[RMDB]
RNA sequence: GGGAACGACUCGAGUAGAGUCGAAAAGCCGAUGAACUGCCGAGAAGCCUGGCUCGAAAUCGUCGACGCAUCGACGACGGUCCUGCCAUGAGACCGUAACGAGGACAUGUCGCCUCGAAUGGCGUCGUAUAACAUGAGUGGUUCGCCACUCAUGUAAUCAAUGGGACCAGUUCGCUGGUCCCAUUGAAAAAGAAACAACAACAACAAC
Reactivity to 2A3 in 0.01 (KOAc 150mM, MgCl2 10mM, bicine 150mM(pH8.5), 24C), signal-to-noise 2, nucleotides 027 to 156: g040c040c000g000a060u100g040a060a070c050u060g010c000c030g050a030g050a140a010g020c030c190u090g050g010c050u030c050g050a060a070a050u020c010g000u010c000g000a050c060g060c080a120u070c010g000a000c020g010a010c000g000g020u000c000c000u050g010c030c000a070u040g010a030g010a050c000c000g010u080a000a020c010g000a000g010g000a000c050a160u160g040u210c160g050c010c010u000c010g000a000a040u040g020g060c000g010u080c030g000u040a180u060a230a000c000a000u000g000a000g000u010g070g000u070u110c260g000c080c000a010c000u020c000a000u000g000u000a000a000
Reactivity to DMS in 0.01 (KOAc 150mM, MgCl2 10mM, bicine 150mM(pH8.5), 24C), signal-to-noise 1, nucleotides 027 to 156: g020c010c020g010a100u000g040a080a130c080u010g010c020c010g000a140g000a110a150g010c020c040u000g040g010c020u010c030g020a020a110a050u010c010g000u000c010g020a060c140g020c090a100u010c060g000a030c010g020a050c000g000g000u010c020c020u010g000c050c260a120u000g000a130g010a050c020c030g000u000a030a090c030g010a070g030g020a100c040a160u010g010u000c040g000c010c000u000c020g000a020a090u000g010g010c000g040u000c050g010u000a080u010a060a080c010a010u010g010a010g050u010g010g000u000u010c300g020c020c000a020c010u000c000a010u010g020u010a020a120